[RMDB]
RNA sequence: GGGAACGACUCGAGUAGAGUCGAAAAGUCGUAUUGGGGUUUAACAGUGUUCAGUAACAUUUUAGCAACUGUCCCAGUUAUUGGUACUUGACUUUGUUAUUGAAUAUGAGGUAGUGAGUAUAUUAAUGAUUUUACACUGUUAAAAUUACAUGUGUUGCCUACUAUGUGGGUUCGCCCACAUAGUAGGAAAAGAAACAACAACAACAAC
Reactivity to 2A3 in 0.01 (KOAc 150mM, MgCl2 10mM, bicine 150mM(pH8.5), 24C), signal-to-noise 4, nucleotides 027 to 156: g040u030c010g020u070a040u070u130g010g010g010g010u030u070u050a030a020c000a000g020u000g010u030u020c010a010g010u010a020a010c010a040u060u070u070u250a050g020c030a040a080c130u050g000u020c010c000c010a020g040u080u190a130u230u060g020g000u000a010c010u050u050g120a100c000u050u020u010g010u010u010a020u020u030g030a050a040u060a050u140g080a080g050g020u050a020g030u020g050a010g070u050a060u010a010u210u140a110a060u070g020a020u000u110u030u000a020c040a010c020u020g030u030u030a040a080a030a050u140u150a040c080a090u120g010u020g000u090u030g030
Reactivity to DMS in 0.01 (KOAc 150mM, MgCl2 10mM, bicine 150mM(pH8.5), 24C), signal-to-noise 2, nucleotides 027 to 156: g010u010c060g030u000a080u000u000g000g010g010g010u000u030u010a060a040c000a090g020u000g020u000u000c040a040g010u000a040a030c000a060u010u020u000u010a090g010c030a070a060c050u010g020u000c040c020c020a150g010u010u000a070u020u020g040g000u010a020c040u000u000g020a070c080u000u000u000g020u010u000a110u010u010g000a050a120u010a050u000g000a100g030g000u000a040g050u000g010a120g020u010a060u000a100u000u000a070a120u000g000a110u000u000u000u000a050c010a050c040u000g000u000u000a000a040a030a050u000u010a060c050a110u000g020u010g020u000u000g000

An RNA of 207 nucleotides, treated with 2A3 and DMS and read out base by base. The data come from the RNA Mapping Database (RMDB), library PDB130. 2A3 adducts were read by reverse transcription with SuperScript II with manganese. The 2A3 profile rests on 2,767 reads. The reactions ran in a buffer of 150 mM KOAc, 10 mM MgCl2 and 150 mM bicine (pH 8.5), at 24 C. For DMS the reverse transcriptase was MarathonRT.